[RMDB]
RNA sequence: GGGAACGACUCGAGUAGAGUCGAAAAAAACUUUUGUGACUUGCUGAAACGGGACUAAUCUCCUCACCGAGGCUAAGCAAGUUAAAUACGCCUCUCAUAUCCUUACCUGAGGGUGGUAAGGAAAUAACCUGCAACGCUUCCUUCGGGAAGCGUUGAAUACAUUUUCUUUGUUCGCAAAGAAAAUGUAAAAAGAAACAACAACAACAAC
Reactivity to 2A3 in 0.01 (KOAc 150mM, MgCl2 10mM, bicine 150mM(pH8.5), 24C), signal-to-noise 2, nucleotides 027 to 156: a000a000a000c140u160u140u050u160g060u040g010a020c000u010u020g010c010u040g060a090a010a120c050g000g000g030a010c040u060a060a080u060c030u050c070c010u020c010a050c000c070g020a020g030g030c040u040a030a010g000c010a000a020g000u030u030a010a090a000u100a040c030g010c000c010u020c000u020c010a020u030a050u260c000c000u010u000a000c000c000u040g060a090g010g130g000u010g010g000u000a010a000g000g000a050a000a000u020a010a030c030c050u090g010c010a000a000c000g010c000u000u000c000c010u040u030c150g050g010g000a000a010g000c010g000u000u000g000a000a000
Reactivity to DMS in 0.01 (KOAc 150mM, MgCl2 10mM, bicine 150mM(pH8.5), 24C), signal-to-noise 1, nucleotides 027 to 156: a050a050a080c080u010u020u010u000g010u000g030a060c010u010u020g000c020u020g020a120a060a050c050g020g000g010a030c050u000a060a100u000c050u010c050c000u010c030a210c120c040g030a100g020g000c000u000a100a060g020c050a010a030g010u000u000a030a070a140u000a100c100g000c030c000u030c020u000c070a140u010a130u010c000c030u000u020a010c010c010u000g010a140g000g000g030u000g000g010u030a000a020g010g010a000a020a060u000a110a050c080c030u010g030c010a000a030c000g000c000u010u000c010c010u000u000c300g060g000g000a010a020g020c000g030u000u000g010a030a130